An RNA of 207 nucleotides, treated with DMS and 2A3 and read out base by base. For DMS, 8,023 sequencing reads were counted. It was measured as part of the RMDB library OK3TST. Values are in units of 0.01, from 0 to 300, in steps of 10. The reactions ran in a buffer of 150 mM KOAc, 10 mM MgCl2 and 150 mM bicine (pH 8.5), at 24 C.

[RMDB]
RNA sequence: GGGAACGACUCGAGUAGAGUCGAAAAGAAGAUUCACUCUCUAUAGACUCAUGAGGUAGAGUCUCAGUUGUGCUACCUCAAUCACAAUAUUACAGAUAGGCGAAUCUGUAAUUAAGAACAGAAUCGCCUCUGUUCUAGAGAGUGAAUCUGGAGAGUCCUAAAUGAUAGUCUUCGGACUAUCAUUUAGAAAAGAAACAACAACAACAAC
Reactivity to DMS in 0.01 (KOAc 150mM, MgCl2 10mM, bicine 150mM(pH8.5), 24C), signal-to-noise 4, nucleotides 027 to 156: g010a110a040g020a040u000u000c020a060c010u000c000u000c010u000a080u000a160g010a110c080u000c090a160u010g010a070g000g040u000a030g000a080g030u000c040u000c020a210g010u000u010g020u010g000c010u000a030c020c010u000c010a090a180u000c060a080c100a160a170u000a090u000u000a000c010a000g010a040u010a050g030g040c030g010a030a190u000c000u010g000u000a030a100u000u010a090a150g010a110a000c000a030g000a040a100u000c030g030c040c030u000c000u000g000u000u000c090u000a060g010a060g010a070g010u000g000a000a000u000c000u010g010g010a130g000a120g010u000c070
Reactivity to 2A3 in 0.01 (KOAc 150mM, MgCl2 10mM, bicine 150mM(pH8.5), 24C), signal-to-noise 5, nucleotides 027 to 156: g050a040a000g000a000u000u000c000a000c010u010c000u000c010u020a030u060a170g050a060c040u070c200a140u080g000a000g010g000u020a010g010a050g090u040c050u020c080a020g020u080u090g050u080g020c000u000a000c000c020u020c020a010a050u100c030a030c030a140a120u110a060u250u110a030c010a000g070a070u170a090g040g000c000g010a010a030u000c010u000g010u020a040a070u190u220a140a070g070a070a020c000a000g000a030a050u010c010g000c020c000u000c000u000g000u010u000c010u010a000g000a000g000a000g000u000g000a000a000u000c000u000g000g030a070g000a010g060u040c010